Overview
Structure probing data (DMS and 2A3) for a 177-nucleotide construct. The RNA was probed in 150 mM KOAc, 10 mM MgCl2 and 150 mM bicine (pH 8.5) at 24 C. The 2A3 profile rests on 5,530 reads. Reactivities are given for positions 27 through 126. The data come from the RNA Mapping Database (RMDB), libraries RFM100 and RFMREP.
RNA sequence: GGGAACGACUCGAGUAGAGUCGAAAAAGGAAACGGGAGCGCUCCAGGCAGGCCCGUUGGACCCGCCGCGUGGGACCGCGCAGCGGGCGAGGCGCGCCGCGGCAGCCCCGAGGAGAGCGGGCGGGGGUGAACGACAAAAAUUCGUUUUUGUCGUUCAAAAAGAAACAACAACAACAAC
Reactivity to DMS in 0.01 (KOAc 150mM, MgCl2 10mM, bicine 150mM(pH8.5), 24C), signal-to-noise 5, nucleotides 027 to 126: a080g020g000a080a090a100c050g000g000g000a160g010c110g010c050u000c090c070a130g030g010c060a140g010g000c010c070c020g000u010u000g010g010a250c010c000c000g000c000c010g000c020g000u000g000g010g020a140c210c080g000c020g010c020a090g010c010g000g010g010c000g010a300g000g010c010g010c300g000c020c020g010c070g000g010c200a090g010c020c020c000c020g000a110g000g000a100g000a090g000c120g010g000g000c120g000g010g000g010g010
Reactivity to 2A3 in 0.01 (KOAc 150mM, MgCl2 10mM, bicine 150mM(pH8.5), 24C), signal-to-noise 4, nucleotides 027 to 126: a000g100g010a060a060a010c030g000g000g020a110g050c110g000c030u060c040c020a040g140g040c050a070g020g020c010c070c000g000u010u010g000g010a040c000c000c000g010c000c010g000c010g000u040g030g160g150a190c190c040g000c000g000c010a000g000c000g000g000g000c010g000a020g030g000c020g000c010g000c000c000g000c010g010g000c030a010g010c010c000c010c000g000a000g000g010a040g000a010g000c060g000g030g010c170g010g000g000g000g010